[RMDB]
RNA sequence: GGGAACGACUCGAGUAGAGUCGAAAAGGCAGGGAGCUGGCAUCUUGUCCUUUGGGCCAUCGGUGUGGUCGAUACAUAGUAGGUCCUCACAGAAGGUCUGUUAAAUGACUGGGGACGAGGGCCUGCAGCUACACGGAAGUUUCGACUUCCGUGUAGCAAAAGAAACAACAACAACAAC
Reactivity to 2A3 in 0.01 (KOAc 150mM, MgCl2 10mM, bicine 150mM(pH8.5), 24C), signal-to-noise 1, nucleotides 027 to 126: g010g000c000a040g000g060g040a100g030c060u060g000g020c040a060u030c040u020u080g040u080c000c000u000u050u070g020g020g000c020c010a020u040c100g090g040u090g010u000g060g020u030c020g040a010u040a210c070a040u140a060g020u000a010g000g020u010c000c000u030c000a050c000a050g190a130a000g010g010u000c030u020g110u100u140a100a250a090u120g000a010c020u030g000g070g070g040a030c080g010a010g000g010g030c000c000u010g000c000a030
Reactivity to DMS in 0.01 (KOAc 150mM, MgCl2 10mM, bicine 150mM(pH8.5), 24C), signal-to-noise 2, nucleotides 027 to 126: g010g000c040a030g010g010g000a090g020c070u010g030g000c040a060u000c060u000u000g010u030c010c030u000u000u010g010g000g010c040c030a070u010c080g010g020u010g030u000g010g010u000c050g000a120u010a100c180a150u010a110g030u040a010g010g010u000c000c000u000c000a070c090a100g010a250a170g010g000u000c000u000g010u000u020a080a140a090u000g000a040c030u000g000g010g020g000a140c230g010a010g010g000g030c000c000u000g020c020a070